RNA sequence: GGGAACGACUCGAGUAGAGUCGAAAAUCUGAUUUUAUUGACAUUGUCAGGCGGUUAGCAGUAUCACUGUUCCAGCCUAUUACUUAUUUCCAAUUGACUACCUCAUUGGUCUUGGGUAUAGGUUUGUAGACCUCUGCCUUCGGGCAGAGGAAAAGAAACAACAACAACAAC
Reactivity to 2A3 in 0.01 (KOAc 150mM, MgCl2 10mM, bicine 150mM(pH8.5), 24C), signal-to-noise 4, nucleotides 027 to 129: u020c000u030g110a090u020u110u030u260a180u080u150g050a040c080a140u060u150g020u040c000a000g010g030c030g050g020u030u040a010g020c020a000g000u070a070u230c050a000c050u020g030u060u020c000c000a010g000c010c000u010a030u060u080a000c000u010u020a020u010u020u010c000c000a010a050u110u100g020a050c060u080a160c090c060u100c010a010u000u010g000g000u030c010u000u000g020g000g020u000a000u000a000g000g000u020u060u080g030u040a040g060a090
Reactivity to DMS in 0.01 (KOAc 150mM, MgCl2 10mM, bicine 150mM(pH8.5), 24C), signal-to-noise 4, nucleotides 027 to 129: u040c010u000g010a000u040u020u050u020a130u060u080g040a080c120a160u020u080g020u030c060a040g020g050c000g020g030u000u030a040g060c070a070g030u020a100u030c120a110c020u010g020u000u050c040c050a150g060c000c060u010a000u050u030a030c020u000u000a080u010u000u060c000c080a030a030u000u000g020a060c200u070a190c180c290u030c040a050u000u030g020g030u040c020u020u040g010g000g030u030a010u030a000g010g000u000u060u080g120u030a090g040a130